[RMDB]
An RNA of 207 nucleotides, treated with 2A3 and read out base by base. Reactivities are given for positions 27 through 156. The RNA was probed in 150 mM KOAc, 10 mM MgCl2 and 150 mM bicine (pH 8.5) at 24 C. Source: RMDB library VIROID, as collected in RNAgym. 2A3 adducts were read by reverse transcription with SuperScript II with manganese. 2A3 is a SHAPE reagent: it acylates the 2'-hydroxyl of flexible nucleotides of all four kinds.
RNA sequence: GGGAACGACUCGAGUAGAGUCGAAAACCGCUGUGGGUUCGCCUACAAGAACGUACGGUGUUGAGGCCCUGUCCGCCGCUGCGCUGCCACCUACUCUCGCCGCGCUAGUCGAGCGGACUCCGGGUGGAGCCCCCUGUUCUCUCACGCUCUUUUUCUUCGUACUGUAUUACUUCGGUAAUACAGUACGAAAAGAAACAACAACAACAAC
Reactivity to 2A3 in 0.01 (KOAc 150mM, MgCl2 10mM, bicine 150mM(pH8.5), 24C), signal-to-noise 1, nucleotides 027 to 156: c030c010g000c100u090g000u100g010g050g000u050u090c060g010c120c010u130a100c080a130a100g040a090a020c080g110u070a050c160g000g000u020g060u110u060g080a090g020g060c010c000c000u000g010u010c010c010g000c000c000g000c010u010g000c000g000c010u000g000c030c020a150c060c010u210a190c060u150c080u090c120g010c000c000g080c010g030c120u130a010g030u250c080g020a100g010c020g000g020a000c000u000c050c040g020g000g010u020g020g040a020g010c000c010c000c020c000u040g000u070u030c040u000c010u050c030a030c050g060c020u050c020u110u110u010u060u020c030u040u010